The data come from the RNA Mapping Database (RMDB), library OK1LIB. Structure probing data (DMS and 2A3) for a 177-nucleotide construct. The reactions ran in a buffer of 150 mM KOAc, 10 mM MgCl2 and 150 mM bicine (pH 8.5), at 24 C. For DMS, 4,034 sequencing reads were counted.
RNA sequence: GGGAACGACUCGAGUAGAGUCGAAAAGAAAGAAAGAAAGAACUGGGCCCCUCUUGUUUUUGAAAGGCUUUGCUCUCAAAGAGUACAUGUUCAUCUUUGUACUGUUAAUGCUGACCAGAGGAUGCAAGAGGUAUUAUGACUUCGGUCAUAAUACCUCAAAAGAAACAACAACAACAAC
Reactivity to DMS in 0.01 (KOAc 150mM, MgCl2 10mM, bicine 150mM(pH8.5), 24C), signal-to-noise 3, nucleotides 027 to 126: g010a080a020a080g000a040a070a040g000a120a120a130g000a090a060c060u000g000g000g000c020c020c000c030u010c030u000u000g010u020u000u040u000u000g000a140a090a080g000g000c080u010u000u020g010c060u000c010u000c090a050a100a070g000a010g010u000a040c050a010u020g020u050u040c210a110u020c060u010u000u010g000u000a010c090u020g000u000u000a090a070u020g020c040u000g000a100c060c020a060g040a060g000g010a120u010g000c100a110a160
Reactivity to 2A3 in 0.01 (KOAc 150mM, MgCl2 10mM, bicine 150mM(pH8.5), 24C), signal-to-noise 4, nucleotides 027 to 126: g100a000a080a020g090a050a070a000g050a040a080a000g040a050a010c040u040g040g020g010c000c000c010c000u050c010u030u130g070u100u100u050u060u130g090a070a050a010g030g000c000u070u040u040g000c000u010c000u010c020a040a030a040g080a020g020u020a040c060a110u110g070u090u180c090a110u070c110u030u100u030g010u060a050c000u010g070u110u150a120a040u130g050c040u040g020a050c000c000a050g010a030g080g000a050u110g020c030a100a060